[RMDB]
RNA sequence: GGGAACGACUCGAGUAGAGUCGAAAAGCGAUCGGCAAGACUCACGCUGAAUUGAUGGAACUUAAAGCGGCUGAGCUUGGCUUAUCGAAAGAAGCAGCGCCACUAAUCGCAAAACUGAAAGAUCAGGGUCGGGCAAUGAAUGCCGCAGGCAUUAGCGCACUGAAUAGUGUUUCGACACUAUUCAGUGAAAAGAAACAACAACAACAAC
Reactivity to DMS in 0.01 (KOAc 150mM, MgCl2 10mM, bicine 150mM(pH8.5), 24C), signal-to-noise 2, nucleotides 027 to 156: g030c010g030a080u000c050g020g020c050a090a040g010a070c030u010c020a090c070g020c010u000g010a080a100u000u010g020a140u000g000g020a140a130c100u020u010a080a160a090g010c010g020g000c030u000g000a050g010c020u000u000g010g010c010u000u040a060u010c060g020a090a090a120g000a100a050g010c040a080g010c170g000c040c050a040c050u000a010a080u000c020g000c020a080a000a110a170c050u000g020a120a060a220g000a070u010c040a120g000g000g030u010c010g000g030g000c010a060a080u000g000a070a110u000g000c000c020g020c110a050g020g000c030a070u000u010a090g010c160g000
Reactivity to 2A3 in 0.01 (KOAc 150mM, MgCl2 10mM, bicine 150mM(pH8.5), 24C), signal-to-noise 5, nucleotides 027 to 156: g080c020g010a020u030c020g020g000c010a020a050g020a220c000u010c020a010c050g010c020u030g040a090a130u110u090g040a100u130g080g110a110a060c060u080u080a200a020a030g030c010g050g010c090u050g020a010g000c000u010u040g090g000c000u010u020a020u050c030g030a050a060a080g040a050a010g010c060a000g020c010g000c060c010a050c100u120a070a040u110c020g000c050a030a030a060a050c030u060g020a080a090a020g050a100u080c030a020g010g030g040u040c030g010g010g000c020a020a010u160g070a090a050u070g030c000c040g070c080a030g000g010c010a020u010u120a040g070c010g000
Structure probing data (DMS and 2A3) for a 207-nucleotide construct. For DMS, 4,200 sequencing reads were counted. Conditions: 150 mM KOAc, 10 mM MgCl2 and 150 mM bicine (pH 8.5), 24 C. For 2A3 the reverse transcriptase was SuperScript II with manganese. Reactivities are rounded to 0.1 and cut off at 0 and 3. It was measured as part of the RMDB library OK3TST. For 2A3, 3,706 sequencing reads were counted.